[RMDB]
RNA sequence: GGGAACGACUCGAGUAGAGUCGAAAAUUUUCGAGUAACCUAAGAGUUUUGGCCCGAAAUCAAAGGAACAAGCCAGGGCUUAUGCGUUGAAAUUGGGAAGGUUCAACUUACUCUCUUUUUUCAGGCAACGAUAAUGUUUCUUCGGAAACAUUAUCGUAAAAGAAACAACAACAACAAC
Reactivity to 2A3 in 0.01 (KOAc 150mM, MgCl2 10mM, bicine 150mM(pH8.5), 24C), signal-to-noise 2, nucleotides 027 to 126: u060u050u020u100c060g010a020g040u020a050a050c010c020u050a110a040g020a020g080u040u020u060u030g020g000c040c000c040g050a120a100a040u150c060a080a050a070g060g030a060a060c030a080a010g020c020c020a030g000g030g010c000u010u050a060u080g030c020g060u040u030g030a040a030a060u050u020g100g000g000a060a020g060g000u080u070c030a060a030c000u020u060a090c000u040c030u000c050u120u050u040u040u030u050c010a010g000g050c000a010
Reactivity to DMS in 0.01 (KOAc 150mM, MgCl2 10mM, bicine 150mM(pH8.5), 24C), signal-to-noise 3, nucleotides 027 to 126: u000u010u000u010c040g010a140g000u000a060a130c070c020u010a090a210g000a060g030u010u000u000u010g020g000c030c000c010g010a100a070a130u030c250a070a120a130g000g000a100a060c090a110a160g010c000c010a050g030g010g000c030u000u000a070u000g000c040g010u010u010g010a020a030a080u000u010g010g000g010a070a070g000g000u010u010c160a040a100c130u000u010a120c080u000c010u000c000u000u000u000u000u000u000c020a060g000g000c130a090

Source: RMDB library OK2TRN, as collected in RNAgym. An RNA of 177 nucleotides, treated with 2A3 and DMS and read out base by base. The 2A3 profile rests on 2,473 reads. Values cover nucleotides 27 to 126.